[RMDB]
RNA sequence: GGGAACGACUCGAGUAGAGUCGAAAAGUACAUCCUCUGGUACGACGCGUCGGGUCUGACCAGCGACCCCGAUCUGUCUGACGAGGCGGUCGAGGCGCACGACCGGGGUGCGAUCACCUCGGCGGCGAAUCUCCUUGGUAUUCGUACCAAGGAGAUUAAAAGAAACAACAACAACAAC
Reactivity to 2A3 in 0.01 (KOAc 150mM, MgCl2 10mM, bicine 150mM(pH8.5), 24C), signal-to-noise 9, nucleotides 027 to 126: g050u040a040c020a150u110c020c060u060c070u100g050g010u080a040c030g010a010c020g030c040g280u060c040g030g030g000u010c030u030g070a070c020c020a010g010c020g190a300c000c020c010c000g000a010u010c050u180g040u010c010u020g080a140c120g120a070g020g000c010g000g000u010c010g010a020g010g010c010g000c030a080c070g140a160c000c000g000g000g030g000u010g020c140g130a170u300c000a010c000c000u010c000g010g000c000g010g010c020g030
Reactivity to DMS in 0.01 (KOAc 150mM, MgCl2 10mM, bicine 150mM(pH8.5), 24C), signal-to-noise 9, nucleotides 027 to 126: g010u010a090c150a120u010c050c040u010c040u000g010g010u000a100c070g000a030c030g010c190g020u010c060g010g000g000u000c020u000g010a240c050c040a080g010c110g000a110c030c010c010c020g010a010u000c030u010g020u000c010u010g010a170c290g010a080g010g020c030g010g000u000c020g010a050g000g000c020g010c020a110c040g000a190c010c000g010g010g000g010u000g010c220g000a180u010c030a030c000c000u000c010g000g010c010g000g010c080g000
An RNA of 177 nucleotides, treated with 2A3 and DMS and read out base by base. The data come from the RNA Mapping Database (RMDB), library OK2TST. For 2A3, 23,325 sequencing reads were counted.